RNA sequence: GGGAACGACUCGAGUAGAGUCGAAAAAAGUUGAUAUGGAUUUACUCCGAGGAGACGAACUACCACGAACAGGGGAAACUCUACCCGUGGUGUCUCCGUUUGACGAGUAAGUCCUAAGUCAACAAAACAUACGUUAGAUGUUCGCAUCUAACGUAUGAAAAGAAACAACAACAACAAC
Reactivity to DMS in 0.01 (KOAc 150mM, MgCl2 10mM, bicine 150mM(pH8.5), 24C), signal-to-noise 5, nucleotides 027 to 126: a060a060g010u000u000g010a010u000a110u010g000g000a010u000u000u000a000c000u000c000c010g000a160g020g010a030g010a010c010g000a080a110c300u010a060c010c000a010c000g000a020a260c150a120g000g020g000g010a040a010a020c010u000c000u000a140c290c150c000g000u010g000g010u000g000u000c000u000c000c010g020u000u010u000g010a120c300g000a020g010u000a010a000g010u000c000c010u010a010a050g000u000c010a010a000c010a070a060a070a100
Reactivity to 2A3 in 0.01 (KOAc 150mM, MgCl2 10mM, bicine 150mM(pH8.5), 24C), signal-to-noise 2, nucleotides 027 to 126: a000a000g010u000u010g000a000u000a010u030g000g000a000u000u000u000a010c000u000c010c000g030a090g010g000a000g020a000c020g010a100a050c100u120a030c060c000a000c000g020a040a020c040a090g010g000g000g000a000a010a000c000u000c000u010a020c000c000c010g000u000g000g020u040g000u010c000u000c000c000g020u170u100u090g010a000c010g010a000g000u010a000a010g000u000c000c000u000a000a000g000u010c000a000a000c010a010a050a000a010

Chemical mapping of a 177-nucleotide RNA with DMS and 2A3. The reactions ran in a buffer of 150 mM KOAc, 10 mM MgCl2 and 150 mM bicine (pH 8.5), at 24 C. The DMS profile rests on 5,238 reads.